RNA sequence: GGGAACGACUCGAGUAGAGUCGAAAAGAUAUGGAGCGGCAAUGGAGAUCCGGAUCGGAAACGAUCCGAAGAUCGAUGAAGUUGCGCUCCUAAGUCAAAAGUUCUCGCACCUUCGGGUGCGAGAACACGUAACUUUAAGCUUCGGCUUAAAGUUACGAAAAGAAACAACAACAACAAC
Reactivity to 2A3 in 0.01 (KOAc 150mM, MgCl2 10mM, bicine 150mM(pH8.5), 24C), signal-to-noise 1, nucleotides 027 to 126: g000a000u000a000u070g000g000a020g010c100g300g000c220a020a000u050g030g030a020g000a020u000c010c010g000g000a000u000c000g000g050a000a000a000c000g000a000u000c020c000g010a080a050g010a000u020c020g110a190u010g000a000a010g010u020u000g000c000g000c000u000c000c000u000a000a000g000u000c000a030a070a050a200g010u030u020c000u000c000g000c000a010c030c020u070u090c300g260g000g020u000g000c000g010a000g000a010a000c010a000
Reactivity to DMS in 0.01 (KOAc 150mM, MgCl2 10mM, bicine 150mM(pH8.5), 24C), signal-to-noise 1, nucleotides 027 to 126: g010a020u000a010u020g010g010a010g050c000g000g000c010a020a000u010g000g000a020g020a000u000c010c010g000g000a000u010c010g030g010a000a010a010c000g020a010u010c000c000g000a070a120g000a000u000c000g000a190u010g030a240a210g000u000u000g000c000g010c000u010c000c000u000a000a080g010u010c010a090a110a100a220g020u010u000c000u000c010g000c020a000c000c000u000u030c250g060g000g000u010g010c000g010a000g000a000a000c000a060
Chemical mapping of a 177-nucleotide RNA with 2A3 and DMS.
Reactivities are rounded to 0.1 and cut off at 0 and 3.
The 2A3 profile rests on 3,640 reads.
The RNA was probed in 150 mM KOAc, 10 mM MgCl2 and 150 mM bicine (pH 8.5) at 24 C.